Chemical mapping of a 177-nucleotide RNA with 2A3 and DMS. DMS adducts were read by reverse transcription with MarathonRT. It was measured as part of the RMDB library OK2TRN. The DMS profile rests on 1,962 reads.
[RMDB]
RNA sequence: GGGAACGACUCGAGUAGAGUCGAAAAGUGAGCCGGUUGACAUACUCGUGAAUCACAAGCUCAUUGCACGUGGUGAAGUGGUGGUCAUAGACGAGAACUUCGGUGUGCGGGUCACGGAGAUCAUAUCGUACAUCCCAUCUUUCGAGAUGGGAUGUACAAAAGAAACAACAACAACAAC
Reactivity to 2A3 in 0.01 (KOAc 150mM, MgCl2 10mM, bicine 150mM(pH8.5), 24C), signal-to-noise 2, nucleotides 027 to 126: g060u020g010a010g010c000c010g000g040u070u050g040a040c030a090u150a100c040u050c060g030u030g090a050a050u020c000a010c000a010a050g000c000u030c070a100u080u080g040c030a010c070g090u110g060g050u050g040a060a060g020u010g030g000u050g020g000u060c020a070u090a090g050a060c070g010a020g050a180a050c000u070u050c050g020g000u100g030u080g030c060g060g000g000u010c020a000c060g050g000a070g030a070u070c020a070u040a040u170c080
Reactivity to DMS in 0.01 (KOAc 150mM, MgCl2 10mM, bicine 150mM(pH8.5), 24C), signal-to-noise 3, nucleotides 027 to 126: g000u000g000a050g000c010c050g000g020u000u000g010a060c030a070u000a120c030u000c110g000u010g020a160a100u000c020a030c040a150a300g030c040u000c100a070u000u000g040c080a080c210g020u000g010g000u000g010a090a040g030u000g000g020u000g010g020u010c040a100u000a110g010a130c100g000a070g000a130a070c060u010u000c040g010g000u000g010u000g000c030g010g000g000u000c040a060c050g010g020a080g010a110u000c090a050u020a170u010c120